[RMDB]
RNA sequence: GGGAACGACUCGAGUAGAGUCGAAAAUGCGGUAACGCAGAAGCAGAACCAACAGGCUGACGCCGCUGCGGCGAAGAAUCAGAACAUCAACUGGGGUGGCUUCACUCCGGGCGAGGACUCGACGUUCGGCUCUGGAUUCGGCAACAACUGGGAUUGGGCACCUGUUAUAUUUCGAUAUAACAGGUGCAAAAGAAACAACAACAACAAC
Reactivity to DMS in 0.01 (KOAc 150mM, MgCl2 10mM, bicine 150mM(pH8.5), 24C), signal-to-noise 1, nucleotides 027 to 156: u000g050c020g030g010u020a070a150c050g030c010a070g010a070a240g080c050a030g020a050a100c010c000a060a130c050a030g010g050c010u010g040a260c040g020c030c000g000c040u000g010c050g000g040c040g050a140a100g000a170a090u000c060a100g010a060a090c090a090u000c040a020a130c060u010g000g060g000g010u000g020g000c160u010u000c000a020c000u000c010c000g120g040g020c120g020a200g000g000a120c030u030c090g020a090c100g000u000u000c040g040g000c040u010c000u010g010g020a070u000u000c030g000g060c050a090a060c040a050a060c040u000g010g000g000a200u000u000g040g030
Reactivity to 2A3 in 0.01 (KOAc 150mM, MgCl2 10mM, bicine 150mM(pH8.5), 24C), signal-to-noise 2, nucleotides 027 to 156: u080g000c020g000g070u080a130a000c030g000c030a010g020a070a010g000c020a000g000a110a070c030c000a010a070c040a080g050g010c010u040g000a020c030g000c010c010g020c060u100g000c000g040g000c030g010a030a010g050a070a090u080c050a040g060a110a040c040a090u100c020a070a100c050u030g000g050g000g000u020g070g070c110u300u300c020a000c020u000c020c010g020g000g010c020g000a010g020g030a010c010u010c060g030a010c020g020u040u050c010g010g000c010u000c040u070g050g030a140u080u070c010g040g020c000a040a020c000a020a050c130u180g020g000g050a130u000u180g030g000